An RNA of 207 nucleotides, treated with DMS and 2A3 and read out base by base. The DMS profile rests on 2,600 reads. The data come from the RNA Mapping Database (RMDB), library M2RFPK.

RNA sequence: GGGAACGACUCGAGUAGAGUCGAAAAAGGCACUCCAUACCCUACUCCGACUCAAUACGUCCCCGUCGUACAGAAUGGUAACAUAUCUCUCCAAAGAUCUGAGCUUGGGUAUACGGGGAAACCCAACAAAAGCAAUUGUGGUUCGCCACAAUUGCAAGACUUAUGUCAUGUUCGCAUGACAUAAGUCAAAAGAAACAACAACAACAAC
Reactivity to DMS in 0.01 (KOAc 150mM, MgCl2 10mM, bicine 150mM(pH8.5), 24C), signal-to-noise 2, nucleotides 027 to 156: a080g020g000c040a110c050u000c080c070a300u000a020c070c000c000u050a110c070u020c030c000g000a040c020u000c010a080a130u000a070c040g040u010c000c020c000c000g050u010c040g000u060a190c080a070g000a130a110u010g020g020u000a080a080c070a080u000a080u010c020u000c030u000c030c030a100a100a090g010a070u000c020u010g010a060g010c090u000u000g010g000g000u000a070u000a060c070g070g090g010g000a040a090a080c020c000c020a040a080c050a080a050a090a180g000c000a010a010u000u000g020u010g040g010u010u000c300g040c000c000a000c000a010a020u010u010g040c000a020a060
Reactivity to 2A3 in 0.01 (KOAc 150mM, MgCl2 10mM, bicine 150mM(pH8.5), 24C), signal-to-noise 5, nucleotides 027 to 156: a010g060g000c030a030c050u050c030c010a050u090a130c000c000c010u030a050c030u030c040c020g090a040c030u020c080a050a120u060a090c010g060u060c010c020c000c000g030u040c000g020u050a040c040a060g130a120a120u100g060g020u090a120a020c020a060u130a090u050c040u000c000u040c070c020a080a170a060g030a110u050c080u170g030a030g060c070u050u030g020g000g000u010a010u010a040c020g000g000g000g000a020a030a020c000c000c000a010a020c020a010a090a010a010g000c000a000a000u000u010g000u000g010g030u040u060c110g030c070c000a000c000a000a000u000u010g030c000a000a010